[RMDB]
RNA sequence: GGGAACGACUCGAGUAGAGUCGAAAAAGCUCAAACCGUACCCUUUCAUCCAGGCAGUGGACAUAGAGGUGCUGGAUCUGGGCACCAAGCCGCCAGCCAUUGGCGGCGCCAAGACAUACACAUCCUCUACAGUCUAUCUUUUCGAAGAUAGACUGUAAAAAGAAACAACAACAACAAC
Reactivity to 2A3 in 0.01 (KOAc 150mM, MgCl2 10mM, bicine 150mM(pH8.5), 24C), signal-to-noise 4, nucleotides 027 to 126: a000g020c010u020c020a040a050a040c010c010g020u030a030c010c000c000u020u050u070c060a040u010c010c020a050g290g010c060a180g300u020g030g020a010c020a030u120a030g070a070g040g030u040g010c070u140g030g020a070u030c020u040g000g000g000c020a020c020c020a030a030g020c010c000g000c000c010a050g060c080c090a150u090u070g010g010c000g020g000c000g000c010c020a060a010g070a060c020a040u190a050c050a000c000a170u100c000c030u070c030
Reactivity to DMS in 0.01 (KOAc 150mM, MgCl2 10mM, bicine 150mM(pH8.5), 24C), signal-to-noise 6, nucleotides 027 to 126: a110g010c010u000c030a030a060a070c050c020g000u000a050c050c020c010u000u000u010c160a180u000c020c020a060g020g010c200a130g020u000g010g000a030c220a100u000a050g000a090g010g020u000g010c020u000g030g000a080u000c100u000g000g000g000c010a170c070c070a080a080g010c000c000g020c000c000a040g000c150c170a150u020u000g020g030c000g010g010c020g000c090c080a040a070g010a050c110a080u010a120c100a050c110a070u010c030c030u000c150